[RMDB]
RNA sequence: GGGAACGACUCGAGUAGAGUCGAAAACUCGAACGGUUCGCCGUUCGAGAAAAGCGCGUCAGCGCUACGAUGGAAGCGCAAGCGCGUGCAUCGUAAAUGAAAAAACUUGUGUGUUCGCACACAAGAAGAGGCAUUACCACUUCGGUGGUAAUGCCUCAAAAGAAACAACAACAACAAC
Reactivity to 2A3 in 0.01 (KOAc 150mM, MgCl2 10mM, bicine 150mM(pH8.5), 24C), signal-to-noise 1, nucleotides 027 to 126: c010u000c000g000a010a020c000g010g070u040u080c140g110c050c000g000u000u000c000g000a010g020a010a080a010a010g010c000g000c000g020u100c040a030g000c020g000c000u010a030c030g220a190u180g040g070a010a080g000c000g000c040a160a030g120c000g000c000g070u020g050c030a040u040c030g060u040a100a100a140u220g240a100a080a000a000a020a040c010u010u010g000u000g000u010g000u030u080c240g010c070a000c000a000c010a000a010g000a010a040